[RMDB]
RNA sequence: GGGAACGACUCGAGUAGAGUCGAAAAGAAAGGGAACGACUGGAGUAGAGUCGAAAAGACGCUCAACUCAUGGAGCGCAAGACGAAUAGCUACAUAUUCGAAAUGAGGGCGCCGUUCAAGAAGGAGACAGCGAGUCAUUAUUCGUAAUGACUCGCUGAAAAGAAACAACAACAACAAC
Reactivity to 2A3 in 0.01 (KOAc 150mM, MgCl2 10mM, bicine 150mM(pH8.5), 24C), signal-to-noise 2, nucleotides 027 to 126: g130a050a080a000g040g040g010a040a000c010g040a000c060u070g160g000a060g040u050a070g000a020g020u030c020g030a000a100a000a030g020a020c050g010c040u000c020a060a070c060u050c160a100u070g110g000a040g000c030g000c050a000a030g000a050c000g000a000a050u030a010g080c100u140a060c060a120u090a060u230u060c040g010a000a040a090u170g000a140g020g050g000c000g010c000c030g020u050u140c080a070a010g020a000a010g110g010a030g000a060
Reactivity to DMS in 0.01 (KOAc 150mM, MgCl2 10mM, bicine 150mM(pH8.5), 24C), signal-to-noise 2, nucleotides 027 to 126: g030a040a070a070g000g000g000a040a090c120g000a150c000u000g000g020a050g000u020a160g000a040g000u000c000g020a010a050a200a050g000a100c150g060c040u000c000a070a110c030u030c100a100u000g030g070a050g010c020g000c000a090a050g020a300c050g000a010a000u010a000g030c220u060a100c110a120u010a000u000u020c000g000a050a160a080u010g000a080g000g000g070c000g000c000c030g000u000u000c040a000a090g000a040a030g020g000a150g000a190

Source: RMDB library OK1LIB, as collected in RNAgym. Structure probing data (2A3 and DMS) for a 177-nucleotide construct. As a SHAPE reagent, 2A3 marks flexible, mostly unpaired nucleotides at the ribose 2'-OH. Conditions: 150 mM KOAc, 10 mM MgCl2 and 150 mM bicine (pH 8.5), 24 C. The DMS profile rests on 1,752 reads.